[RMDB]
RNA sequence: GGGAACGACUCGAGUAGAGUCGAAAACUGCGCUGAGCCCUUCUCCCCCAGCUUGCCUGUGUCCUAGGGAAUUGGAAGGUCAUCCUUCACAGGAUCGUGUGGAAGUCCUGCUCGGGGCGUAAGCAUUAUAAACCUUAGACGUUCGCGUCUAAGGUAAUCCAACAUUACUGUUCGCAGUAAUGUUGGAAAAAGAAACAACAACAACAAC
Reactivity to 2A3 in 0.01 (KOAc 150mM, MgCl2 10mM, bicine 150mM(pH8.5), 24C), signal-to-noise 2, nucleotides 027 to 156: c030u070g030c040g000c050u110g040a040g030c010c010c010u170u040c180u180c020c020c000c030c000a010g020c030u080u110g100c000c010u050g020u020g010u060c000c030u070a080g000g000g050a110a120u120u040g070g030a060a020g010g020u160c060a040u150c040c000u030u030c000a010c000a010g020g000a100u110c040g020u070g020u050g200g010a020a030g020u030c000c020u000g040c040u040c020g000g040g000g000c000g020u040a000a030g010c010a000u110u140a080u150a070a090a000c000c000u000u000a000g000a020c000g060u040u040c180g030c010g110u000c000u000a000a000g000g000u000a000a000
Reactivity to DMS in 0.01 (KOAc 150mM, MgCl2 10mM, bicine 150mM(pH8.5), 24C), signal-to-noise 3, nucleotides 027 to 156: c040u000g020c060g060c010u000g000a150g020c030c110c020u010u000c080u000c020c010c000c020c030a120g030c050u000u000g020c040c010u000g030u020g010u000c040c030u000a110g020g020g020a080a140u000u030g020g000a090a040g030g020u010c070a190u010c010c020u010u000c060a120c020a070g010g010a080u000c050g000u020g050u010g030g010a130a060g010u000c020c020u000g010c060u000c070g000g000g010g040c020g020u000a030a080g030c030a110u010u010a090u000a070a090a060c010c000u010u010a000g010a030c010g010u000u010c300g020c010g020u000c000u000a010a020g010g000u010a010a030